[RMDB]
RNA sequence: GGGAACGACUCGAGUAGAGUCGAAAACCUCUCCUUGUCGGUGAACCCCCUGGCCUUGGGUUUCCUCCCAGGUCCGAAAUCAACCUCCAUGGUUUCCUGCCUGGGCCUCUUCGCCGGGGGCGCUCCGUUGCGUGGUUAUUCGUAACCACGAAAAGAAACAACAACAACAAC
Reactivity to DMS in 0.01 (KOAc 150mM, MgCl2 10mM, bicine 150mM(pH8.5), 24C), signal-to-noise 9, nucleotides 027 to 129: c030c020u030c030u020c020c080u040u070g030u080c000g000g020u000g000a070a110c080c010c000c000c020u020g020g020c020c040u040u000g020g010g010u050u060u070c100c120u060c000c020c030a000g000g010u000c060c190g030a020a030a030u020c020a040a130c050c060u030c040c020a140u040g020g030u010u010u010c020c080u040g030c000c010u010g030g030g060c260c020u040c020u010u010c190g000c050c000g000g000g000g000g000c250g000c040u000c030c000g050u040u090g030
Reactivity to 2A3 in 0.01 (KOAc 150mM, MgCl2 10mM, bicine 150mM(pH8.5), 24C), signal-to-noise 9, nucleotides 027 to 129: c000c010u060c040u080c020c030u110u230g140u160c010g020g010u050g060a070a060c010c000c000c000c040u060g000g000c000c010u020u060g010g000g020u080u150u120c020c030u060c000c000c000a000g000g010u000c020c030g010a000a000a000u020c010a030a300c020c040u090c040c030a060u030g000g000u000u000u000c010c020u010g020c000c000u000g000g010g000c000c000u060c010u050u050c020g000c000c000g010g010g010g000g000c000g000c010u000c000c010g090u090u170g050

About this RNA: Chemical mapping of a 170-nucleotide RNA with DMS and 2A3. 2A3 adducts were read by reverse transcription with SuperScript II with manganese. The reactions ran in a buffer of 150 mM KOAc, 10 mM MgCl2 and 150 mM bicine (pH 8.5), at 24 C.